[RMDB]
RNA sequence: GGGAACGACUCGAGUAGAGUCGAAAAGAUAUGGACAGUGGACAUGAUAAACCCUCGGAAACGAGGGCACUAUCAACAGCCACGUCCUAAGUCAAAACUCCAAUUCUCCUUCGGGAGAAUUGGAGAACUACACGCACUAGUUCGCUAGUGCGUGUAGAAAAGAAACAACAACAACAAC
Reactivity to 2A3 in 0.01 (KOAc 150mM, MgCl2 10mM, bicine 150mM(pH8.5), 24C), signal-to-noise 2, nucleotides 027 to 126: g010a020u060a030u130g030g000a040c210a220g040u000g020g000a000c070a250u100g020a010u040a060a180a090c000c000c000u000c000g000g040a090a090a050c000g000a000g000g000g010c030a010c000u010a010u010c010a020a150c070a080g030c020c000a000c010g010u000c000c000u010a150a020g050u020c030a000a010a100a180c000u000c000c020a000a000u010u000c000u020c010c010u050u170c260g150g000g000a000g000a000a000u000u000g000g000a000g000a000a000
Reactivity to DMS in 0.01 (KOAc 150mM, MgCl2 10mM, bicine 150mM(pH8.5), 24C), signal-to-noise 2, nucleotides 027 to 126: g010a020u000a300u010g000g000a040c010a130g050u000g030g020a080c100a190u010g000a010u000a010a170a230c010c010c000u040c000g010g000a060a060a200c000g050a000g000g000g010c000a020c190u000a010u000c000a000a070c260a180g050c020c000a010c000g000u000c000c000u000a030a060g010u010c030a020a030a080a050c000u000c000c000a070a010u000u010c000u000c000c000u000u060c140g020g020g000a000g030a000a000u000u000g010g010a000g000a000a060
This 177-nucleotide RNA was probed chemically with 2A3 and DMS. Conditions: 150 mM KOAc, 10 mM MgCl2 and 150 mM bicine (pH 8.5), 24 C. Source: RMDB library TTRDEL, as collected in RNAgym. DMS adducts were read by reverse transcription with MarathonRT.